RNA sequence: GGGAACGACUCGAGUAGAGUCGAAAAGAUGACUGACAUAACGCAGAGAGAGUGCAAGGCGAGUUGUCGCUUCACUCUCUCAAGGCAAGUGUAGCAGGACAGGUGCCUACAUUGCGUGUUAGUCAGAGAUAGGUGACGUGUUCGCAUGUUAUCUAUCAAAAGAAACAACAACAACAAC
Reactivity to 2A3 in 0.01 (KOAc 150mM, MgCl2 10mM, bicine 150mM(pH8.5), 24C), signal-to-noise 9, nucleotides 027 to 126: g130a070u090g010a010c000u000g000a000c010a060u070a140a020c060g010c150a010g000a000g000a000g000a000g000u020g020c110a110a050g080g000c010g010a040g050u140u100g160u170c000g000c000u000u000c000a000c000u000c000u000c000u000c000a000a000g010g000c010a010a030g110u000g000u020a020g020c030a020g020g110a050c040a060g130g070u030g050c010c000u000a010c010a030u010u060g000c000g000u010g000u000u010a000g000u000c010a000g010a000
Reactivity to DMS in 0.01 (KOAc 150mM, MgCl2 10mM, bicine 150mM(pH8.5), 24C), signal-to-noise 9, nucleotides 027 to 126: g010a130u000g000a040c000u000g000a010c010a070u020a200a090c140g010c060a080g000a010g000a010g000a010g020u000g000c300a070a030g000g010c000g000a060g020u020u020g010u000c000g010c000u000u010c000a010c000u000c000u000c000u000c000a010a010g000g000c010a030a020g010u010g010u000a040g000c050a100g000g010a140c300a120g000g010u040g000c100c000u000a040c090a040u010u000g000c020g010u000g000u000u000a010g000u000c000a020g000a080